The record gives the reactivity of an RNA of 177 nucleotides to 2A3 and DMS. The RNA was probed in 150 mM KOAc, 10 mM MgCl2 and 150 mM bicine (pH 8.5) at 24 C. 2A3 adducts were read by reverse transcription with SuperScript II with manganese. Source: RMDB library OK2TRN, as collected in RNAgym. Values cover nucleotides 27 to 126.
RNA sequence: GGGAACGACUCGAGUAGAGUCGAAAACACAUAUGAAUGUAUGAGUCGAUGGCGGCCUUUGUCGAGAGUUCGCUACCUCUCCGGUUGUCGAGAGUUCGGCAAGCUCACCCUCACCCUACCGGGCCUCGUAUAAUAUGAGCUUCGGCUCAUAUUAUACAAAAGAAACAACAACAACAAC
Reactivity to 2A3 in 0.01 (KOAc 150mM, MgCl2 10mM, bicine 150mM(pH8.5), 24C), signal-to-noise 3, nucleotides 027 to 126: c050a010c010a030u140a060u250g230a290a050u220g040u100a070u090g030a020g080u100c050g060a050u090g060g000c030g010g020c030c040u090u120u080g040u040c030g010a010g010a010g110u040u040c020g000c020u020a040c010c000u100c020u030c050c030g100g030u090u090g100u170c040g010a010g000a010g100u080u050c030g000g000c010a030a010g010c010u020c010a060c010c000c000u020c020a070c010c000c000u020a090c040c030g020g020g010c010c020u030c040
Reactivity to DMS in 0.01 (KOAc 150mM, MgCl2 10mM, bicine 150mM(pH8.5), 24C), signal-to-noise 6, nucleotides 027 to 126: c060a120c090a070u000a060u010g010a160a060u010g000u010a030u010g000a090g010u000c070g000a060u000g010g020c070g010g000c080c050u000u000u000g020u010c050g010a060g010a070g000u010u000c060g020c020u000a080c200c010u000c100u010c100c090g000g010u000u010g010u020c060g000a040g010a070g000u000u000c060g000g010c010a030a070g000c040u000c030a140c040c010c030u000c050a100c040c020c010u000a070c100c060g010g000g010c050c030u000c140